[RMDB]
RNA sequence: GGGAACGACUCGAGUAGAGUCGAAAAUGGCGGUCGGUCACGAGACGUGGCUUAAGAUAGAGUCCGUUCGCGCUGAAAAGCGUUCGUCGGGAAGAAAGCCUUAGCAAGGCCGGAGCCAGACGAAGGGUAGCCAUUAUUGGCUGCCUCGAGGUACACGGUGAGAACAAGUGUUCGCACUUGUUCUCACAAAAGAAACAACAACAACAAC
Reactivity to 2A3 in 0.01 (KOAc 150mM, MgCl2 10mM, bicine 150mM(pH8.5), 24C), signal-to-noise 3, nucleotides 027 to 156: u090g010g000c020g030g080u060c030g000g000u010c040a040c160g090a110g080a110c170g040u060g010g000c000u060u060a080a010g040a070u140a040g110a050g040u040c020c010g050u080u040c030g000c010g000c020u050g040a010a010a010a020g010c010g000u030u030c020g030u020c000g000g010g050a030a070g070a080a070a000g010c010c010u070u080a050g020c110a080a050g010g000c010c000g010g030a000g000c010c010a000g010a000c010g020a010a000g010g000g010u020a000g010c000c020a030u110u130a170u160u220g000g000c000u000g000c000c000u000c000g020a000g000g050u080a040c110a010c050g090
Reactivity to DMS in 0.01 (KOAc 150mM, MgCl2 10mM, bicine 150mM(pH8.5), 24C), signal-to-noise 1, nucleotides 027 to 156: u000g000g020c030g060g000u020c030g030g000u010c070a040c050g030a160g040a050c030g060u010g030g000c010u000u000a060a130g010a280u000a130g020a110g060u010c000c050g060u010u000c040g000c070g020c010u040g040a090a120a060a050g010c030g040u000u000c040g010u010c020g020g010g010a060a090g000a140a130a020g000c010c010u000u000a260g000c230a300a100g030g000c000c010g000g000a260g000c020c000a040g000a010c000g020a170a060g030g000g010u000a060g010c020c000a080u000u000a210u010u000g000g000c000u000g010c000c000u000c010g010a050g000g000u010a050c180a100c000g000
An RNA of 207 nucleotides, treated with 2A3 and DMS and read out base by base. The reactions ran in a buffer of 150 mM KOAc, 10 mM MgCl2 and 150 mM bicine (pH 8.5), at 24 C. For DMS, 1,821 sequencing reads were counted. It was measured as part of the RMDB library RSTRND.